[RMDB]
RNA sequence: GGGAACGACUCGAGUAGAGUCGAAAAGGACAGUUUGAAAAGAAACGUAGAUGUCGGGGAUUUAACCUCUUUGAAGAACAACCUUACAUCCUGUAGUAAAGUUGUCGGUGCGUGUCACCACAAAGUGUCACUUGCUCUCGUUCGCGAGAGCAAGUGAAAAAGAAACAACAACAACAAC
Reactivity to DMS in 0.01 (KOAc 150mM, MgCl2 10mM, bicine 150mM(pH8.5), 24C), signal-to-noise 1, nucleotides 027 to 126: g010g020a030c030a100g020u030u000u000g010a190a060a010a070g020a030a040a050c090g030u010a050g020a120u000g010u010c060g000g000g030g000a240u010u020u020a150a120c040c040u000c010u000u000u040g010a100a130g000a120a020c010a060a130c000c020u020u010a050c030a090u030c070c150u000g010u010a120g000u000a020a040a060g020u000u000g010u000c090g020g020u010g000c040g000u010g000u000c010a080c060c020a110c080a040a020a040g000u010g000